[RMDB]
RNA sequence: GGGAACGACUCGAGUAGAGUCGAAAAUGGUGAGAUAAGAUGGAAAGACCCAGGCCAGGCACAGUGGCUCGCGCCUGUAAUCCCAGCACUUUGGGAGGCCAAGGUGGGCAGAUCACUUGAGGCCAGGAGUUCAAGACUAGCCUGGACAACAUGGCAAGUAAUCAUCAUUGUUCGCAAUGAUGAUUACAAAAGAAACAACAACAACAAC
Reactivity to DMS in 0.01 (KOAc 150mM, MgCl2 10mM, bicine 150mM(pH8.5), 24C), signal-to-noise 2, nucleotides 027 to 156: u000g010g040u020g010a100g000a170u000a010a130g010a120u030g030g010a100a120a150g040a190c060c010c020a120g000g040c050c000a050g000g000c000a070c050a070g030u010g020g010c040u010c040g050c030g020c000c000u000g030u010a080a100u000c000c000c010a100g030c130a070c080u000u030u000g020g000g020a060g000g000c070c030a050a040g010g050u000g040g000g020c040a070g000a070u010c020a040c050u000u000g020a140g050g000c050c000a060g030g000a070g030u000u020c040a070a080g010a080c070u000a090g000c040c010u020g000g000a110c040a000a060c030a060u000g000g030c020a080a180
Reactivity to 2A3 in 0.01 (KOAc 150mM, MgCl2 10mM, bicine 150mM(pH8.5), 24C), signal-to-noise 2, nucleotides 027 to 156: u090g030g030u060g020a030g030a060u090a180a030g020a050u050g020g020a100a050a020g030a020c010c000c030a000g020g000c000c000a000g000g000c000a000c000a050g030u000g020g020c020u010c000g060c000g010c010c010u000g050u060a040a030u040c000c020c000a040g040c170a090c130u230u150u000g010g000g000a010g020g000c010c030a060a010g020g000u020g010g040g000c070a030g040a160u060c020a020c020u030u070g030a100g030g000c000c000a020g020g070a030g010u060u110c090a080a020g020a060c010u040a020g030c010c000u020g020g000a010c000a000a010c000a030u070g040g000c050a070a010
Conditions: 150 mM KOAc, 10 mM MgCl2 and 150 mM bicine (pH 8.5), 24 C. An RNA of 207 nucleotides, treated with DMS and 2A3 and read out base by base. For DMS the reverse transcriptase was MarathonRT.